About this RNA
The data come from the RNA Mapping Database (RMDB), library OK2TRN. Chemical mapping of a 177-nucleotide RNA with DMS. For DMS, 957 sequencing reads were counted. The reactions ran in a buffer of 150 mM KOAc, 10 mM MgCl2 and 150 mM bicine (pH 8.5), at 24 C.
RNA sequence: GGGAACGACUCGAGUAGAGUCGAAAAGGGGACGGUCGCAGUGUGAAGCAGGCGGACGGCAGGGUGAAGCUGAAACUGUCACCGUCCACGCGCAGUGUUUUCAGGAAGACCUGUCCCCGGGCAGGACUGUCCGGGGGCUAUUCGUAGCCCCCGGACAAAAAGAAACAACAACAACAAC
Reactivity to DMS in 0.01 (KOAc 150mM, MgCl2 10mM, bicine 150mM(pH8.5), 24C), signal-to-noise 1, nucleotides 027 to 126: g060g000g010g010a040c000g040g000u020c020g000c150a190g000u000g010u000g000a050a010g040c000a020g010g040c010g000g020a070c120g010g010c150a040g030g030g000u030g010a130a110g020c170u000g000a080a220a120c080u010g000u010c050a040c030c000g000u010c010c020a080c100g000c010g020c000a050g000u000g010u000u000u000u000c060a090g010g000a120a190g000a050c010c030u000g010u000c010c000c000c060g000g000g000c110a140g000g020a170c140